An RNA of 207 nucleotides, treated with DMS and 2A3 and read out base by base.
RNA sequence: GGGAACGACUCGAGUAGAGUCGAAAAGAACUUAGCACUAGCUGCCUAAUUAGCGCAGCGAGCUCUUGCCCGCAUCGCCUAUGUGCCGGUUAAGAGCCCAUAACGAAGUAGGCUACGCUUGCGCCCCCGUCUGAGGGCGCAGGAAGAGACUCAUCAGCGAAUACUAAUACUUCGGUAUUAGUAUUCGAAAAGAAACAACAACAACAAC
Reactivity to DMS in 0.01 (KOAc 150mM, MgCl2 10mM, bicine 150mM(pH8.5), 24C), signal-to-noise 2, nucleotides 027 to 156: g010a100a110c070u010u020a080g040c090a140c040u000a100g010c040u000g020c000c050u000a080a170u000u010a080g020c080g030c020a300g010c010g010a030g030c000u010c050u010u000g010c020c030c090g020c010a050u000c040g030c120c090u000a060u020g010u000g030c000c100g050g050u000u000a040a060g000a070g020c010c000c020a090u000a050a120c110g010a040a080g070u000a030g020g020c000u010a190c060g010c000u000u000g040c000g020c010c000c000c010c040g020u030c220u020g000a040g030g020g040c040g030c000a000g010g010a080a100g020a200g010a110c080u000c060a110u000c020a180g000
Reactivity to 2A3 in 0.01 (KOAc 150mM, MgCl2 10mM, bicine 150mM(pH8.5), 24C), signal-to-noise 4, nucleotides 027 to 156: g060a090a040c100u150u110a040g060c060a060c130u070a040g000c010u010g000c010c000u210a300a300u240u280a110g020c100g000c110a000g000c000g010a000g000c000u000c000u000u020g000c000c010c010g000c000a000u010c030g010c000c000u010a000u010g000u010g000c000c020g000g050u100u300a020a010g010a000g050c000c040c000a200u220a160a070c210g100a090a000g000u010a000g000g000c000u000a000c000g010c010u010u000g000c000g000c000c010c010c000c000g060u040c050u030g010a030g000g000g000c000g000c000a010g000g010a000a000g020a010g080a010c070u090c170a140u040c030a020g040
Overview: It was measured as part of the RMDB library ARCHII.